Structure probing data (DMS and 2A3) for a 177-nucleotide construct.

RNA sequence: GGGAACGACUCGAGUAGAGUCGAAAACAAAAACAAACAGCCCAAGAGGAAAGGGCUGACGCGCGCAGCCGCACCAAAGAAAGGUGCAGUACGAUAGGCUGCCGCGACUAUCGUACUCAAAACAAAACUACAGCUUAGACUUCGGUCUAAGCUGUAGAAAAGAAACAACAACAACAAC
Reactivity to DMS in 0.01 (KOAc 150mM, MgCl2 10mM, bicine 150mM(pH8.5), 24C), signal-to-noise 1, nucleotides 027 to 126: c110a030a010a190a060a090c260a230a060a220c020a010g000c000c000c000a110a110g000a030g000g000a090a100a130g000g000g020c000u070g050a220c000g030c000g000c240g090c040a080g050c050c000g000c010a100c000c000a130a000a150g000a080a120a010g000g060u000g020c000a010g010u070a090c150g020a050u040a000g000g040c020u000g000c020c020g000c000g000a030c210u000a000u000c130g000u020a050c040u040c000a240a140a100a090c090a050a090a070a200
Reactivity to 2A3 in 0.01 (KOAc 150mM, MgCl2 10mM, bicine 150mM(pH8.5), 24C), signal-to-noise 1, nucleotides 027 to 126: c050a020a050a010a010a000c140a090a120a000c000a000g030c000c000c000a100a030g100a040g070g230a060a050a070g000g000g020c000u000g100a000c020g000c000g000c000g000c010a000g000c000c000g020c000a000c000c000a260a090a070g140a100a110a030g000g000u000g000c000a000g110u070a000c090g060a080u010a050g010g000c000u020g020c000c020g000c010g020a000c000u130a090u220c050g030u030a040c010u000c080a070a040a120a010c070a000a020a010a010
Overview
Values are in units of 0.01, from 0 to 300, in steps of 10. It was measured as part of the RMDB library OK1LIB. The RNA was probed in 150 mM KOAc, 10 mM MgCl2 and 150 mM bicine (pH 8.5) at 24 C.